[RMDB]
RNA sequence: GGGAACGACUCGAGUAGAGUCGAAAAGUCCGUUCCUUCGGGAACGGACAAAGGGAAACCAAGCAGUAGGUUCGAGUACCUACAGCAAAAAUAAACACGAAAAAAGCCCUCUGUUCGCAGAGGGCAACAUGAAUUCAUAGUUCGCUAUGAAUUCAUGAAAAGAAACAACAACAACAAC
Reactivity to DMS in 0.01 (KOAc 150mM, MgCl2 10mM, bicine 150mM(pH8.5), 24C), signal-to-noise 4, nucleotides 027 to 126: g000u000c000c000g020u000u000c010c010u000u010c250g030g010g010a010a010c000g010g010a000c000a000a040a080g000g010g010a120a050a220c040c020a080a120g010c010a070g030u000a000g000g010u010u000c150g010a210g020u000a010c000c000u010a000c010a070g010c030a020a050a050a100a060u020a050a060a070c120a090c180g020a010a050a080a090a130a140g000c000c000c000u000c000u000g000u010u010c160g010c020a010g010a010g000g010g010c000a000a010
Reactivity to 2A3 in 0.01 (KOAc 150mM, MgCl2 10mM, bicine 150mM(pH8.5), 24C), signal-to-noise 5, nucleotides 027 to 126: g000u000c000c000g000u000u010c010c000u010u030c180g100g000g000a000a000c000g000g000a000c000a000a000a010g010g020g000a030a040a040c010c020a040a030g000c010a010g000u020a000g010g030u050u140c140g190a060g120u090a020c010c000u010a010c010a000g020c010a000a120a030a040a000u190a050a170a020c110a030c130g100a080a090a030a030a050a030g010c000c000c010u010c000u020g060u060u070c230g010c090a000g000a000g000g000g000c000a000a000